Source: RMDB library TTRDES, as collected in RNAgym.
An RNA of 177 nucleotides, treated with DMS and 2A3 and read out base by base.
For 2A3 the reverse transcriptase was SuperScript II with manganese.
For 2A3, 4,419 sequencing reads were counted.
DMS adducts were read by reverse transcription with MarathonRT.
[RMDB]
RNA sequence: GGGAACGACUCGAGUAGAGUCGAAAAGAUAUGGACGUGGUAGGGAGCUUAGUAUUCGGAAACGAAUACAGGAGCGAGGAUCUACCCACGUCCUAAGUCAAAACUGGACUGGUUCGCCAGUCCAGAACAUACGAGGUGUCUUCGGACACCUCGUAUGAAAAGAAACAACAACAACAAC
Reactivity to DMS in 0.01 (KOAc 150mM, MgCl2 10mM, bicine 150mM(pH8.5), 24C), signal-to-noise 2, nucleotides 027 to 126: g010a030u000a040u010g000g010a020c010g060u000g000g000u000a000g000g000g000a040g070c000u010u000a120g020u040a000u000u010c000g010g000a040a020a050c000g000a000a000u000a000c000a220g020g020a030g010c000g040a090g020g000a020u020c000u000a000c150c030c050a020c020g010u000c010c010u000a000a050g000u010c020a120a070a130a230c000u000g000g020a020c010u000g010g000u000u020c300g020c010c010a010g000u000c000c010a000g000a050a140
Reactivity to 2A3 in 0.01 (KOAc 150mM, MgCl2 10mM, bicine 150mM(pH8.5), 24C), signal-to-noise 1, nucleotides 027 to 126: g000a010u020a010u030g000g000a010c020g010u030g000g000u000a000g000g020g000a000g030c010u010u000a030g010u060a000u000u000c010g010g010a010a000a000c010g000a000a000u010a000c020a010g150g260a010g020c000g020a230g000g020a010u000c000u010a010c000c020c000a000c010g010u000c010c000u000a010a000g000u000c010a020a030a160a170c010u000g010g000a000c010u000g000g100u080u110c300g060c090c000a000g000u000c010c000a000g000a010a020
For DMS, 2,615 sequencing reads were counted.